This 177-nucleotide RNA was probed chemically with DMS and 2A3. Source: RMDB library OK2TST, as collected in RNAgym. The reactions ran in a buffer of 150 mM KOAc, 10 mM MgCl2 and 150 mM bicine (pH 8.5), at 24 C. High DMS reactivity at an A or C suggests that its Watson-Crick edge is free. For DMS, 5,157 sequencing reads were counted. For 2A3 the reverse transcriptase was SuperScript II with manganese.
[RMDB]
RNA sequence: GGGAACGACUCGAGUAGAGUCGAAAAAUGAAACGUAUUAUCGUUGAAGAUACUGAAGAAGAUCCUAAUGUUAAUCUGACUCCAUUGAUUGACAUUGUUUUUGUUAUUUUAAUGGCGUUUAUGAUAGCGGUGCAUGUAUAUUCGUAUACAUGCACCGAAAAGAAACAACAACAACAAC
Reactivity to DMS in 0.01 (KOAc 150mM, MgCl2 10mM, bicine 150mM(pH8.5), 24C), signal-to-noise 5, nucleotides 027 to 126: a070u000g020a070a050a050c060g010u010a090u000u010a090u010c070g020u000u000g000a170a300g000a060u010a060c070u020g010a080a130g010a150a060g000a110u000c010c020u000a050a070u020g010u000u000a070a040u000c010u010g010a040c030u000c040c020a030u000u010g000a010u000u000g010a000c010a020u000u000g010u000u000u000u000u000g000u000u000a030u010u000u010u010a010a040u000g000g000c090g000u000u010u010a070u030g010a050u000a080g020
Reactivity to 2A3 in 0.01 (KOAc 150mM, MgCl2 10mM, bicine 150mM(pH8.5), 24C), signal-to-noise 3, nucleotides 027 to 126: a000u110g040a030a000a020c030g010u020a130u230u040a070u270c030g040u040u100g010a060a020g010a040u080a160c050u120g080a090a050g080a060a030g050a160u040c010c020u110a160a080u180g030u210u150a130a040u040c010u030g000a010c000u000c030c000a000u030u000g000a020u000u000g010a000c010a020u040u040g300u250u080u030u040u030g020u010u020a150u040u050u000u010a010a020u010g000g030c020g010u040u020u110a070u120g030a010u010a020g130